[RMDB]
RNA sequence: GGGAACGACUCGAGUAGAGUCGAAAAGUUCUGCUUUCAUUGGAUUUCAGAUCAAGAGGUAAUGAUUAAUGGAAGCAAUUUGGGGGAAUUAGUAUUACGACGCUAGAGCUGAAAUUCUUGGACCGUCCCGGUAAGAUAAGUUCGCUUAUCUUACCGGAAAAGAAACAACAACAACAAC
Reactivity to 2A3 in 0.01 (KOAc 150mM, MgCl2 10mM, bicine 150mM(pH8.5), 24C), signal-to-noise 2, nucleotides 027 to 126: g010u060u060c100u110g060c010u020u030u000c010a050u020u060g050g040a050u090u020u000c040a060g050a130u050c040a070a070g030a050g190g050u040a030a030u050g140a010u040u080a020a000u030g040g050a070a000g030c040a050a070u220u110u130g030g010g000g010g010a030a040u060u030a080g030u010a030u080u020a030c090g020a000c020g000c060u050a010g010a000g010c010u010g010a040a030a000u040u030c000u020u020g000g000a040c000c020g000u030c000
Reactivity to DMS in 0.01 (KOAc 150mM, MgCl2 10mM, bicine 150mM(pH8.5), 24C), signal-to-noise 3, nucleotides 027 to 126: g010u000u000c120u000g010c030u000u000u010c010a040u010u000g000g010a030u000u010u000c050a040g000a060u000c060a100a080g000a130g010g010u010a040a070u010g000a050u000u010a040a010u000g000g010a080a060g000c070a060a100u000u010u000g020g010g010g000g010a150a040u000u000a030g010u010a070u010u000a070c060g020a090c140g000c010u000a020g010a040g010c020u000g010a030a040a060u000u000c000u000u000g010g010a160c080c020g020u000c100